[RMDB]
RNA sequence: GGGAACGACUCGAGUAGAGUCGAAAACAAGGAGGGUAGUGUGAUCAAUUUCUGUUACAUGCAUCAAAUGGAACUUGCUAAUGGUACACAUACCGGUUCAGCAUUUGAUGGUACUAUGUAUGGUGCCCGGGGAGAAAGUUUUCGAACUUUCUCCCCGAAAAGAAACAACAACAACAAC
Reactivity to DMS in 0.01 (KOAc 150mM, MgCl2 10mM, bicine 150mM(pH8.5), 24C), signal-to-noise 2, nucleotides 027 to 126: c080a100a070g000g010a070g010g000g020u000a050g020u010g000u000g010a050u000c090a080a100u000u000u000c040u000g020u000u000a030c030a020u000g000c050a020u000c030a030a030a040u010g000g010a000a040c030u000u010g000c140u010a060a050u010g010g010u010a070c160a120c080a070u000a040c140c110g020g000u000u000c040a100g010c030a060u010u010u000g010a050u000g000g010u010a030c080u000a050u000g000u010a040u010g000g030u000g000c050c060
Reactivity to 2A3 in 0.01 (KOAc 150mM, MgCl2 10mM, bicine 150mM(pH8.5), 24C), signal-to-noise 1, nucleotides 027 to 126: c050a060a060g090g010a060g060g020g020u020a050g070u020g040u080g090a070u090c040a060a110u000u160u000c030u030g100u010u060a060c030a020u040g060c000a050u030c000a020a040a010u010g020g010a010a000c020u050u070g000c020u130a150a020u100g000g040u120a040c170a010c010a120u030a020c000c000g040g020u020u020c000a080g050c020a010u010u020u110g030a010u000g020g030u000a010c040u100a010u100g090u020a060u050g010g040u080g020c060c030
Chemical mapping of a 177-nucleotide RNA with DMS and 2A3. The reactions ran in a buffer of 150 mM KOAc, 10 mM MgCl2 and 150 mM bicine (pH 8.5), at 24 C. For DMS the reverse transcriptase was MarathonRT.